[RMDB]
RNA sequence: GGGAACGACUCGAGUAGAGUCGAAAACCUCAGCCGCACUGAAGCCAGGCCAACUGGAAGGAAAUAGAAACGUCAGCCAGCGACAGUUGGUGUCUGGUAAUGUAGCUGCAGUGAGAAGAUACAGAACUGCUAAAAACAGGGCCUGAAAGCUGAGAGACAUUAAAUACUCAUUCGUGAGUAUUUAAUGAAAAGAAACAACAACAACAAC
Reactivity to DMS in 0.01 (KOAc 150mM, MgCl2 10mM, bicine 150mM(pH8.5), 24C), signal-to-noise 5, nucleotides 027 to 156: c020c000u000c020a030g000c010c020g050c020a110c030u000g020a130a230g010c020c010a070g000g010c020c020a030a080c010u010g010g010a190a140g010g010a080a120a300u000a160g010a090a110a110c030g010u000c080a270g010c020c040a080g020c030g010a080c020a030g000u000u010g010g030u000g010u000c020u000g000g040u000a040a030u000g010u000a060g010c040u000g020c030a040g010u010g020a170g010a100a060g010a200u000a120c050a060g010a150a080c020u010g040c020u010a070a060a100a100a080c020a060g000g010g000c030c010u000g000a090a070a120g010c020u010g010a090g000a300g010a180
Reactivity to 2A3 in 0.01 (KOAc 150mM, MgCl2 10mM, bicine 150mM(pH8.5), 24C), signal-to-noise 7, nucleotides 027 to 156: c000c000u020c010a000g000c010c040g040c020a020c030u050g020a190a010g010c000c000a010g010g000c000c000a000a000c000u010g020g080a110a080g080g070a100a140a090u240a110g130a080a160a030c070g090u080c060a050g060c070c020a010g030c020g080a070c000a010g000u000u000g000g020u020g110u010c000u000g000g000u020a010a040u080g020u030a040g000c040u040g000c020a010g020u060g050a100g020a110a030g030a030u120a140c040a010g070a110a020c010u030g000c030u080a040a040a010a090a020c020a030g010g010g050c010c020u070g050a090a040a000g020c020u030g000a020g010a000g000a060